[RMDB]
RNA sequence: GGGAACGACUCGAGUAGAGUCGAAAAACGUGCCAUAGCGAUACGUCGCUAUGGCACGAUGCCCAUCGGGGCUGUGGAUACCUGCUUUAAAUUUUUACGGUAGGACCAGUACGCUGGUCCUACCGAAACCUCUUGCACCAUUCGUGGUGCAAGAGGUAAAAGAAACAACAACAACAAC
Reactivity to 2A3 in 0.01 (KOAc 150mM, MgCl2 10mM, bicine 150mM(pH8.5), 24C), signal-to-noise 2, nucleotides 027 to 126: a010c010g000u010g030c080c000a010u000a000g040c000g040a040u010a100c300g090u010c000g040c000u000a000u010g010g020c000a000c000g010a000u000g040c040c000c000a050u140c070g000g030g060g000c120u020g030u120g180g000a060u100a190c020c010u010g020c000u170u120u120a130a280a250u240u080u000u030u160a040c000g010g000u000a010g000g000a020c000c000a000g010u050a050c290g030c060u000g000g000u000c000c000u000a000c000c000g010a010a000
This 177-nucleotide RNA was probed chemically with 2A3. The data come from the RNA Mapping Database (RMDB), library RFM100. For 2A3 the reverse transcriptase was SuperScript II with manganese. The 2A3 profile rests on 639 reads. Conditions: 150 mM KOAc, 10 mM MgCl2 and 150 mM bicine (pH 8.5), 24 C.